[RMDB]
The record gives the reactivity of an RNA of 177 nucleotides to 2A3 and DMS. DMS adducts were read by reverse transcription with MarathonRT. The RNA was probed in 150 mM KOAc, 10 mM MgCl2 and 150 mM bicine (pH 8.5) at 24 C. 2A3 is a SHAPE reagent: it acylates the 2'-hydroxyl of flexible nucleotides of all four kinds.

RNA sequence: GGGAACGACUCGAGUAGAGUCGAAAAUUGGAAAGAGUUCAUUGCCCGUUCAUGGGUUUGGGCUAUCGUCGCCCAGUUUACGAUUAUUAAUGCGGCUUUUAGUGGCGUAGUGAUGAUUCUUGGCCCACGUAGCCCUACAUUUCGAUGUAGGGCUACGAAAAGAAACAACAACAACAAC
Reactivity to 2A3 in 0.01 (KOAc 150mM, MgCl2 10mM, bicine 150mM(pH8.5), 24C), signal-to-noise 3, nucleotides 027 to 126: u040u040g020g000a060a040a040g070a080g030u020u000c000a030u030u150g070c020c000c050g050u150u130c160a260u260g000g000g000u040u020u020g000g000g000c020u050a100u180c110g140u080c070g030c000c000c000a000g000u020u040u050a020c030g000a040u030u040a030u030u090a100a090u120g040c050g000g130c090u100u110u090u170a100g030u060g060g010c040g000u000a000g030u000g050a040u010g000a020u070u010c020u060u100g080g000c000c000c000a020
Reactivity to DMS in 0.01 (KOAc 150mM, MgCl2 10mM, bicine 150mM(pH8.5), 24C), signal-to-noise 3, nucleotides 027 to 126: u010u000g000g000a090a120a100g000a040g010u000u000c000a030u010u010g020c010c010c000g020u000u010c240a110u010g020g000g010u000u000u000g010g000g010c000u000a080u010c120g000u000c240g010c150c000c010a040g010u000u000u000a090c090g010a000u000u000a060u000u000a030a060u000g000c030g000g000c010u000u000u000u000a150g020u010g010g010c020g030u000a030g010u000g010a040u000g010a040u000u000c070u000u000g010g020c000c000c010a170